[RMDB]
RNA sequence: GGGAACGACUCGAGUAGAGUCGAAAAUGAAAUAGCGUGUGCAAGACGCUGAUCUUGCCAUGAUCUGGAACUUUAGUGCUGAGGUCCGAGUUCCAGGGAAUCAUGUCGGACCUUAGCACUAAUUAAAGCUUCUUACACUGUUCGCAGUGUAAGAAGCAAAAGAAACAACAACAACAAC
Reactivity to DMS in 0.01 (KOAc 150mM, MgCl2 10mM, bicine 150mM(pH8.5), 24C), signal-to-noise 3, nucleotides 027 to 126: u000g000a110a070a140u010a040g000c030g040u000g010u010g020c010a010a010g000a030c010g020c280u010g010a080u000c010u000u000g000c010c000a010u000g000a090u000c070u000g020g010a110a140c070u010u000u000a010g020u000g010c010u000g010a010g010g000u000c010c010g020a010g000u000u000c090c090a100g010g010g010a080a050u010c180a120u000g010u000c020g010g010a040c000c010u000u010a000g010c010a010c010u000a000a010u000u010a070a070a100
Reactivity to 2A3 in 0.01 (KOAc 150mM, MgCl2 10mM, bicine 150mM(pH8.5), 24C), signal-to-noise 3, nucleotides 027 to 126: u190g020a040a020a050u150a060g030c000g010u040g090u150g010c010a000a000g030a000c040g040c300u100g020a270u030c010u010u000g010c000c000a010u020g020a110u030c040u050g060g050a020a070c010u020u040u020a010g000u000g010c000u000g010a000g010g000u000c000c000g000a020g010u080u040c040c010a030g060g050g040a040a050u170c100a100u190g080u080c010g040g000a000c020c000u000u000a000g000c000a010c000u000a000a000u010u060a040a020a010
An RNA of 177 nucleotides, treated with DMS and 2A3 and read out base by base. High 2A3 reactivity points to a flexible backbone, as in loops and unpaired stretches. Reactivities are rounded to 0.1 and cut off at 0 and 3. For DMS the reverse transcriptase was MarathonRT. Source: RMDB library M2PK90, as collected in RNAgym. 2A3 adducts were read by reverse transcription with SuperScript II with manganese.